[RMDB]
RNA sequence: GGGAACGACUCGAGUAGAGUCGAAAAAACAACAUCGUUCGUUUCUCCCGUCAAGCCGCCCCCGUGGCUGCCUGACACUCUUAACGGAGACGGGGUGAGGUCAGCCUUGUCACCCAAAUGACCCAUGCCAUACUGUGCUGUUCGCAGCACAGUAUGGAAAAGAAACAACAACAACAAC
Reactivity to DMS in 0.01 (KOAc 150mM, MgCl2 10mM, bicine 150mM(pH8.5), 24C), signal-to-noise 1, nucleotides 027 to 126: a070a000c090a060a060c070a130u000c090g020u000u030c030g020u000u000u000c020u000c010c010c080g030u010c010a070a020g050c000c060g020c060c020c000c300c120g000u020g030g010c000u000g000c010c040u000g020a060c020a190c230u010c110u000u050a240a080c170g020g000a040g000a130c090g000g000g000g000u000g000a030g000g000u000c000a060g000c000c010u010u000g010u020c160a090c060c000c120a050a010a060u030g040a090c000c000c200a160u020g000
Reactivity to 2A3 in 0.01 (KOAc 150mM, MgCl2 10mM, bicine 150mM(pH8.5), 24C), signal-to-noise 1, nucleotides 027 to 126: a000a010c090a080a030c040a160u160c090g050u070u000c010g010u020u020u040c000u010c010c000c000g030u020c010a020a000g020c000c000g000c010c000c000c020c020g030u080g020g000c010u000g030c010c000u000g010a020c000a040c090u120c050u190u140a140a060c060g000g000a040g040a080c000g000g010g000g020u000g130a090g020g000u030c020a030g040c000c020u020u040g030u050c010a050c010c000c000a020a020a010u040g050a000c000c000c050a100u160g050

Structure probing data (DMS and 2A3) for a 177-nucleotide construct. It was measured as part of the RMDB library RFMREP. The reactions ran in a buffer of 150 mM KOAc, 10 mM MgCl2 and 150 mM bicine (pH 8.5), at 24 C. DMS adducts were read by reverse transcription with MarathonRT.